[RMDB]
RNA sequence: GGGAACGACUCGAGUAGAGUCGAAAAUGAGUACUGGGAACAAAUCCUCCUCCGAAGGCUCCGCGGGAUUGUCCCUCCAGAGGGUUCACUUCCCCAGCUCCUCCAUAGUGAAAUCUUUGUUUUCUUUCCUCGUCCUUGCGGGUAAGUUCCGCUAACAGAUAUCCAACAUGUUCGCAUGUUGGAUAUCAAAAGAAACAACAACAACAAC
Reactivity to 2A3 in 0.01 (KOAc 150mM, MgCl2 10mM, bicine 150mM(pH8.5), 24C), signal-to-noise 1, nucleotides 027 to 156: u130g000a010g040u060a070c020u050g020g040g010a120a020c030a090a180a060u080c030c010u000c000c000u080c040c040g040a070a020g050g020c030u090c140c040g030c140g030g050g000a050u070u150g040u120c000c010c000u020c050c010a090g060a060g140g030g000u070u050c010a010c060u070u110c040c000c000c000a000g000c020u060c000c010u000c010c030a120u060a050g040u030g130a000a080a070u090c050u000u010u020g060u030u050u030u060c000u000u010u010c010c050u040c010g020u030c010c000u000u090g000c020g010g000g000u040a060a080g000u090u040c000c000g030c020u010a050a030c030a010